[RMDB]
RNA sequence: GGGAACGACUCGAGUAGAGUCGAAAAGGCCAAAAAUACAGUAGCGAUUGUAAUGUCGUACGGUAUUCUUUGGACGGUAAUUUCAGAACAGAGGUUGAUCCCGACCUAUCUGCUUUCUAUGUUAAGGAUAGUCGAGAGUUCGCUCUCGACAAAAGAAACAACAACAACAAC
Reactivity to DMS in 0.01 (KOAc 150mM, MgCl2 10mM, bicine 150mM(pH8.5), 24C), signal-to-noise 2, nucleotides 027 to 129: g020g020c030c000a060a010a000a090a010u010a030c020a000g020u030a010g070c010g040a000u030u000g050u090a130a090u000g000u000c010g000u020a060c010g000g080u020a000u000u020c180u000u000u000g000g000a040c040g000g000u040a140a120u030u020u020c130a060g000a040a050c080a040g010a030g030g000u020u000g010a160u020c010c030c040g000a020c050c000u040a080u000c010u020g020c150u000u000u000c070u120a120u000g030u000u000a100a080g000g000a050u050a090
Reactivity to 2A3 in 0.01 (KOAc 150mM, MgCl2 10mM, bicine 150mM(pH8.5), 24C), signal-to-noise 9, nucleotides 027 to 129: g070g020c010c000a000a000a000a000a000u000a000c000a010g010u020a020g250c000g020a010u010u110g200u300a120a180u300g000u000c000g020u000a000c000g000g000u000a010u010u020c160u050u000u000g000g030a040c010g000g030u150a120a170u110u160u140c120a030g020a050a020c000a020g050a020g060g000u000u000g010a100u020c000c000c000g010a010c000c000u020a090u030c000u000g020c040u090u080u000c060u050a120u110g110u110u070a090a030g110g090a150u120a130

Conditions: 150 mM KOAc, 10 mM MgCl2 and 150 mM bicine (pH 8.5), 24 C. This 170-nucleotide RNA was probed chemically with DMS and 2A3. DMS adducts were read by reverse transcription with MarathonRT. Source: RMDB library 15KLIB, as collected in RNAgym. The DMS profile rests on 18,494 reads.